[RMDB]
RNA sequence: GGGAACGACUCGAGUAGAGUCGAAAAAGGACGUCCUCCCUGUCUCCUCGGUUCUUCUUCGAUCCGGACCGGCUCAUCUCGGCAAAAGGCGGCAGUCCUCAGUACUCUUACUCUUUCCUAUAAAGAGCCAGGGCACUCUUCGGAGUGCCCAAAAGAAACAACAACAACAAC
Reactivity to DMS in 0.01 (KOAc 150mM, MgCl2 10mM, bicine 150mM(pH8.5), 24C), signal-to-noise 2, nucleotides 027 to 129: a120g050g040a120c070g070u020c060c000u020c040c020c040u000g050u020c040u020c040c010u040c160g020g000u010u010c030u000u060c060u000u050c070g030a180u070c010c000g000g000a150c100c080g000g030c030u000c030a250u030c110u000c060g010g010c080a090a030a080a180g010g010c080g010g060c060a050g000u070c000c000u000c000a160g030u030a050c040u000c030u050u000a180c100u030c020u090u030u040c080c010u100a170u040a190a000a000g000a030g000c090c060a070
Reactivity to 2A3 in 0.01 (KOAc 150mM, MgCl2 10mM, bicine 150mM(pH8.5), 24C), signal-to-noise 2, nucleotides 027 to 129: a000g040g010a060c060g050u060c000c000u020c030c000c000u060g100u040c030u030c010c000u000c000g000g060u060u000c000u080u000c000u070u100c050g060a040u000c000c000g000g080a060c000c050g020g030c000u000c000a160u030c000u000c020g020g000c010a080a080a000a000g030g000c040g020g000c040a020g030u030c000c010u000c000a020g010u050a080c020u020c000u010u040a070c000u000c000u050u040u000c000c000u050a060u080a150a070a010g010a010g020c010c010a040
Structure probing data (DMS and 2A3) for a 170-nucleotide construct. For 2A3 the reverse transcriptase was SuperScript II with manganese. For 2A3, 4,533 sequencing reads were counted. The data come from the RNA Mapping Database (RMDB), library 15KLIB.